[RMDB]
Chemical mapping of a 177-nucleotide RNA with 2A3 and DMS. The 2A3 profile rests on 12,825 reads. DMS adducts were read by reverse transcription with MarathonRT. It was measured as part of the RMDB library RFMREP.
RNA sequence: GGGAACGACUCGAGUAGAGUCGAAAAUGAGAAUGUAAAGUGAUGAUCAGCUAUCGUAUUUCAUGUCGUAAUAGUAGUCACGUUAGGGUGAUAUAACGAGGCGAGAGUUAUAUCAUCAUAGUGCGAUUCACUACAUAAGGUUCGCCUUAUGUAGUGAAAAAGAAACAACAACAACAAC
Reactivity to 2A3 in 0.01 (KOAc 150mM, MgCl2 10mM, bicine 150mM(pH8.5), 24C), signal-to-noise 7, nucleotides 027 to 126: u170g010a030g050a080a080u110g020u180a060a070a080g020u030g040a050u030g010a040u080c060a020g020c020u040a010u070c020g060u060a140u030u160u090c110a080u140g070u080c020g020u030a040a010u010a060g150u020a020g060u030c020a000c050g020u040u090a090g030g070g000u000g000a000u000a000u000a020a010c020g000a030g090g030c080g040a070g000a000g050u020u010a030u010a000u050c000a000u000c010a000u040a020g080u050g030c010g010a010u030
Reactivity to DMS in 0.01 (KOAc 150mM, MgCl2 10mM, bicine 150mM(pH8.5), 24C), signal-to-noise 6, nucleotides 027 to 126: u010g010a090g010a100a060u010g010u000a050a070a130g010u000g010a060u000g010a070u010c140a160g000c060u000a050u010c040g010u000a100u010u000u010c090a080u000g000u010c050g000u010a080a080u000a090g000u010a110g000u000c020a020c020g010u010u000a080g000g010g000u000g000a020u000a020u000a010a010c000g000a120g010g010c050g000a030g010a150g010u000u000a020u000a010u010c020a010u000c000a040u000a040g010u000g000c040g000a150u000